[RMDB]
Description:
This 177-nucleotide RNA was probed chemically with DMS and 2A3. The reactions ran in a buffer of 150 mM KOAc, 10 mM MgCl2 and 150 mM bicine (pH 8.5), at 24 C.
RNA sequence: GGGAACGACUCGAGUAGAGUCGAAAAGAGAGACAACAGAUUUGCAUCCCAGACACAUUCACACUGGGCCAAGAGCAGCUGCCAUUGCAGAUUCGAGUCACGUCCUUUUUUCCUUCCUUCUCCUUCUUAUAUUACUGCACUUCGGUGCAGUAAUAUAAAAAGAAACAACAACAACAAC
Reactivity to DMS in 0.01 (KOAc 150mM, MgCl2 10mM, bicine 150mM(pH8.5), 24C), signal-to-noise 2, nucleotides 027 to 126: g010a180g000a100g030a040c030a000a090c150a070g000a130u010u000u010g020c010a120u000c010c000c030a080g010a100c170a090c130a070u000u010c100a100c130a120c070u000g010g000g010c130c030a050a080g000a040g000c040a090g000c090u000g020c020c060a050u000u010g000c080a040g020a030u010u000c100g020a180g010u000c020a060c090g000u000c030c000u000u000u000u030u010u000c040c070u000u000c030c020u000u010c060u010c020c020u020u000c050u000
Reactivity to 2A3 in 0.01 (KOAc 150mM, MgCl2 10mM, bicine 150mM(pH8.5), 24C), signal-to-noise 1, nucleotides 027 to 126: g030a000g000a000g000a030c000a040a000c030a090g060a100u020u020u120g020c010a030u050c010c010c000a010g070a030c010a000c000a120u200u170c010a040c010a010c170u010g000g000g000c060c080a150a030g080a010g060c030a020g050c040u110g000c030c030a050u090u090g000c040a000g030a100u090u130c010g000a010g030u010c020a000c080g050u040c020c060u000u020u080u020u020u020c010c000u110u100c010c010u090u140c050u070c000c000u040u080c010u060
Background
For 2A3, 1,075 sequencing reads were counted.